Source: RMDB library OK1LIB, as collected in RNAgym. Chemical mapping of a 177-nucleotide RNA with 2A3 and DMS. For 2A3 the reverse transcriptase was SuperScript II with manganese. The RNA was probed in 150 mM KOAc, 10 mM MgCl2 and 150 mM bicine (pH 8.5) at 24 C.
[RMDB]
RNA sequence: GGGAACGACUCGAGUAGAGUCGAAAAGCGUCCGGGCAGGGUGUUGUAGAUGGAGUCGCCGGUCUGCGGCGUGCCGAGGUACAGGAUGCGGCCCGGAGUGCCGGGCUUGCCGGUGCAGAUGGCCGAGCGUCUCAGAUAAAUUCGUUUAUCUGAGACGAAAAGAAACAACAACAACAAC
Reactivity to 2A3 in 0.01 (KOAc 150mM, MgCl2 10mM, bicine 150mM(pH8.5), 24C), signal-to-noise 5, nucleotides 027 to 126: g030c010g050u030c010c010g000g030g010c050a050g040g040g010u070g020u120u060g040u050a050g010a180u100g050g020a030g060u060c020g000c030c020g020g050u150c100u100g080c010g020g000c020g020u070g050c000c010g040a080g000g030u050a060c020a050g080g030a090u110g080c010g020g010c010c000c000g030g010a090g010u060g060c000c000g010g000g030c120u060u150g070c000c010g000g000u020g000c030a020g010a170u100g030g000c020c020g020a050g040
Reactivity to DMS in 0.01 (KOAc 150mM, MgCl2 10mM, bicine 150mM(pH8.5), 24C), signal-to-noise 5, nucleotides 027 to 126: g010c050g000u000c020c040g010g000g010c050a060g000g010g010u000g000u010u010g020u020a050g010a100u010g000g010a120g010u000c020g010c020c020g000g010u030c070u020g000c020g020g010c010g010u050g030c010c010g000a190g010g010u020a040c070a080g000g010a080u020g010c020g010g000c010c010c020g000g000a230g010u020g000c020c010g000g000g000c140u010u020g010c000c010g000g000u010g010c040a070g010a150u020g010g000c020c020g000a150g010